[RMDB]
RNA sequence: GGGAACGACUCGAGUAGAGUCGAAAACGCUGGGAAUUCGAGCUUAAUGAGGGAGCUGAAGCGCGCACGGCGAAGAACUCAUCCAGCUUUCGUUCCUGUGCUGAAGCGCGCACGGCAACCGAAAGGUGCGGACCUUCCAUGUUUCGACAUGGAAGAAUCUGUAGAGAGAGUUCGCUCUCUCUACAGAAAAAGAAACAACAACAACAAC
Reactivity to DMS in 0.01 (KOAc 150mM, MgCl2 10mM, bicine 150mM(pH8.5), 24C), signal-to-noise 1, nucleotides 027 to 156: c050g000c060u030g020g070g010a150a190u010u000c010g000a000g030c030u010u000a110a080u000g000a130g020g010g000a170g000c000u010g000a060a090g000c020g030c010g040c030a300c050g000g010c010g010a110a150g010a100a090c010u010c030a040u000c050c050a090g010c030u030u000u020c080g000u000u000c020c000u000g010u020g040c010u010g000a150a030g020c010g010c060g000c010a140c040g050g010c000a080a090c020c020g000a030a040a080g010g010u000g020c030g020g000a110c140c020u000u000c000c010a010u010g010u000u000u000c270g000a080c030a010u000g000g000a020a010g000a020a030
Reactivity to 2A3 in 0.01 (KOAc 150mM, MgCl2 10mM, bicine 150mM(pH8.5), 24C), signal-to-noise 5, nucleotides 027 to 156: c040g020c020u060g000g010g100a100a080u180u150c060g040a090g050c020u090u130a100a020u140g010a050g030g000g000a030g000c020u020g040a190a040g020c020g000c010g000c000a020c040g010g020c010g060a140a020g010a090a030c020u020c030a040u040c060c050a020g020c000u040u080u060c030g010u010u010c000c010u040g060u070g040c010u060g050a180a030g000c000g000c010g000c020a010c040g050g010c030a080a040c010c000g030a070a020a010g030g010u040g020c020g030g060a050c000c000u000u030c000c000a010u000g030u000u120u100c200g080a020c010a000u000g010g000a000a010g000a000a080